An RNA of 177 nucleotides, treated with DMS and 2A3 and read out base by base.
The DMS profile rests on 8,086 reads.
RNA sequence: GGGAACGACUCGAGUAGAGUCGAAAAUUGUAAUCCUGUUCAACACCAUGGAUGCGGACCUCUCCAUUCCUCUUGGCAAUACCAACAACUUGCCAGGGUUAACAACGCCCCUGGAGCCGAUCGUUGAUCGAGAUGACUAAUUCGUUAGUCAUCUCGAAAAAGAAACAACAACAACAAC
Reactivity to DMS in 0.01 (KOAc 150mM, MgCl2 10mM, bicine 150mM(pH8.5), 24C), signal-to-noise 4, nucleotides 027 to 126: u030u040g010u010a130a080u010c010c010u000g000u020u020c070a090a090c080a140c070c060a070u000g000g000a090u000g000c020g000g020a070c040c010u000c020u010c010c020a150u010u000c020c020u020c030u010u000g000g010c020a040a040u010a130c080c100a050a070c300a050a050c100u000u020g000c020c000a010g010g000g000u010u040a060a050c140a040a080c150g010c080c020c000c020u000g020g010a080g000c070c040g020a040u020c040g020u020u000g000a090
Reactivity to 2A3 in 0.01 (KOAc 150mM, MgCl2 10mM, bicine 150mM(pH8.5), 24C), signal-to-noise 7, nucleotides 027 to 126: u140u090g080u080a040a030u020c010c010u010g060u070u070c070a090a060c060a060c090c010a090u150g050g000a040u070g070c050g020g050a060c010c010u040c010u000c020c000a020u050u050c010c000u050c020u030u050g000g000c010a040a050u050a240c050c040a040a090c040a060a080c070u030u050g000c000c000a000g010g010g000u020u070a070a040c070a030a060c050g040c000c000c000c010u030g040g010a020g040c010c030g070a120u080c070g050u010u040g020a070